[RMDB]
Chemical mapping of a 177-nucleotide RNA with 2A3 and DMS.
Source: RMDB library M2PK50, as collected in RNAgym.
The reactions ran in a buffer of 150 mM KOAc, 10 mM MgCl2 and 150 mM bicine (pH 8.5), at 24 C.
The DMS profile rests on 1,027 reads.
2A3 adducts were read by reverse transcription with SuperScript II with manganese.
DMS (dimethyl sulfate) methylates the pairing face of unpaired adenines and cytosines.
For DMS the reverse transcriptase was MarathonRT.
RNA sequence: GGGAACGACUCGAGUAGAGUCGAAAAGUGGAUAGUUUCGACUAUCCACACAACUGAUGAACUUACAGUGGAGGAUGAAGAAGAUGGCCAUCGGAUCCUCAAAUAGCACAGAGUUCGCUCUGUGCAAGAGGAUUUCAUGGUUCGCCAUGAAAUCCUCAAAAGAAACAACAACAACAAC
Reactivity to 2A3 in 0.01 (KOAc 150mM, MgCl2 10mM, bicine 150mM(pH8.5), 24C), signal-to-noise 2, nucleotides 027 to 126: g010u010g020g000a010u010a000g000u000u030u120c220g010a010c000u000a000u040c010c000a000c000a000c010a000a010c010u110g040a080u070g030a140a040c030u060u150a060c070a040g050u070g080g070a020g000g010a050u070g060a060a150g030a060a010g050a110u060g040g000c030c000a020u030c030g010g000a020u010c000c000u070c000a050a080a120u140a020g010c010a000c000a010g000a000g020u030u030c140g050c050u000c000u000g000u010g010c010a000a000
Reactivity to DMS in 0.01 (KOAc 150mM, MgCl2 10mM, bicine 150mM(pH8.5), 24C), signal-to-noise 1, nucleotides 027 to 126: g000u010g010g020a000u000a010g000u000u010u000c080g000a080c000u000a020u000c000c000a000c000a030c110a090a070c020u010g000a040u010g000a180a100c100u010u000a060c120a050g010u000g020g020a020g000g000a060u000g000a170a130g030a050a030g020a090u000g010g030c020c020a060u000c070g030g010a100u000c000c010u030c090a050a020a090u000a110g020c000a000c000a020g020a030g020u010u010c220g010c010u000c000u000g030u020g010c000a060a030